Description:
Structure probing data (2A3 and DMS) for a 207-nucleotide construct. DMS adducts were read by reverse transcription with MarathonRT. The reactions ran in a buffer of 150 mM KOAc, 10 mM MgCl2 and 150 mM bicine (pH 8.5), at 24 C.
RNA sequence: GGGAACGACUCGAGUAGAGUCGAAAACACGGCUUCGGCCGUGCGAUUUACCUUUGUGUUUAAGUGUACAAGGGAGCGAUCGACGCCCAUUGGGCGUCAGAUCGCGAGGAUCUUGUACUCUUAAACACUCUGGUUGGAAUUCGAGUUCGCUCGAAAAUGUGAAGAUAUUAUUCGUAAUAUCUUCACAAAAAGAAACAACAACAACAAC
Reactivity to 2A3 in 0.01 (KOAc 150mM, MgCl2 10mM, bicine 150mM(pH8.5), 24C), signal-to-noise 3, nucleotides 027 to 156: c000a000c020g010g010c010u080u140c280g160g000c010c010g000u010g020c010g030a030u100u120u260a050c010c000u020u030u010g000u000g010u000u000u000a010a010g000u000g000u000a010c000a000a000g000g020g000a000g020c010g000a000u000c010g000a000c010g010c000c000c100a170u300u300g010g030g000c030g010u000c070a090g000a000u010c000g000c010g000a100g000g000a000u010c000u000u000g000u000a000c000u000c000u010u000a000a000a000c000a000c000u000c000u000g030g040u040u060g100g070a130a190u020u020c000g000a010g040u070u130c110g040c050u020c010g020a050a080a030a090
Reactivity to DMS in 0.01 (KOAc 150mM, MgCl2 10mM, bicine 150mM(pH8.5), 24C), signal-to-noise 1, nucleotides 027 to 156: c000a010c000g010g010c010u000u010c300g060g000c030c010g040u010g020c000g000a100u010u000u000a040c000c000u000u010u000g010u000g000u000u000u000a010a020g030u010g000u000a010c000a030a030g000g000g000a080g020c010g020a010u010c000g030a050c000g000c000c010c030a300u010u000g090g000g060c010g000u000c030a010g050a000u000c020g000c010g000a050g020g000a020u000c010u010u000g050u000a010c010u000c000u010u000a010a010a010c000a000c000u000c030u000g010g000u000u000g030g000a110a180u000u000c010g000a080g000u000u020c250g010c070u010c010g010a040a040a120a190